[RMDB]
RNA sequence: GGGAACGACUCGAGUAGAGUCGAAAAGAUAUGGAUCAGUCCUAUUUCCAUCGAUCUCGGAAACGAGGGAGGAGGAUAGGAGCUGAUCCUAAGUCAAAAGAUCAAGGAUGUUCGCAUCCUUGAUCAAGACAUCAAGAUCGUUCGCGAUCUUGAUGUCAAAAGAAACAACAACAACAAC
Reactivity to DMS in 0.01 (KOAc 150mM, MgCl2 10mM, bicine 150mM(pH8.5), 24C), signal-to-noise 2, nucleotides 027 to 126: g000a060u010a300u000g000g010a020u010c000a020g010u000c000c000u010a000u000u000u000c000c010a220u000c080g000a260u000c000u000c000g000g000a100a090a210c010g030a000g000g000g010a250g000g010a010g000g010a020u000a010g010g000a060g020c000u000g000a010u000c010c000u000a020a100g010u000c040a060a060a110a120g000a000u000c000a010a020g000g010a010u000g010u000u000c160g030c000a010u000c000c000u000u000g000a000u020c000a040a080
Reactivity to 2A3 in 0.01 (KOAc 150mM, MgCl2 10mM, bicine 150mM(pH8.5), 24C), signal-to-noise 2, nucleotides 027 to 126: g030a020u100a040u140g020g000a000u000c000a020g020u000c010c000u010a030u010u100u020c040c020a150u300c030g020a060u020c000u020c010g000g050a140a080a060c020g000a030g010g010g010a000g030g020a010g090g010a000u000a020g030g020a070g160c000u010g000a000u000c000c000u000a030a000g020u000c000a010a020a060a200g010a000u000c000a000a000g020g010a010u010g050u130u120c270g000c120a010u020c000c000u000u000g010a000u010c000a000a000